[RMDB]
Notes: Chemical mapping of a 177-nucleotide RNA with DMS. For DMS the reverse transcriptase was MarathonRT. The reactions ran in a buffer of 150 mM KOAc, 10 mM MgCl2 and 150 mM bicine (pH 8.5), at 24 C.
RNA sequence: GGGAACGACUCGAGUAGAGUCGAAAAGGUUGCCGAUCCGCGCUGGAAGGCAUGGGCCGACAGCGCCAAUGCCGACUAUCGCGACAAUAUCAAGUCGCCGGUCAUUUCGGGCGAAGUGCAGAUGGGAAUCAUCGGAUGGCUUCGGCCAUCCGAUGAUAAAAGAAACAACAACAACAAC
Reactivity to DMS in 0.01 (KOAc 150mM, MgCl2 10mM, bicine 150mM(pH8.5), 24C), signal-to-noise 1, nucleotides 027 to 126: g020g000u000u020g020c020c010g020a100u020c050c020g000c050g050c050u000g000g070a050a300g040g000c000a010u000g020g000g000c000c030g010a210c200a120g020c280g050c010c070a040a000u000g000c030c000g000a300c050u000a030u000c030g000c000g020a100c160a050a010u000a130u030c180a120a050g020u000c010g000c000c000g030g010u000c240a300u000u010u000c100g020g040g010c070g000a020a010g010u010g040c150a090g000a080u020g000g000g000a200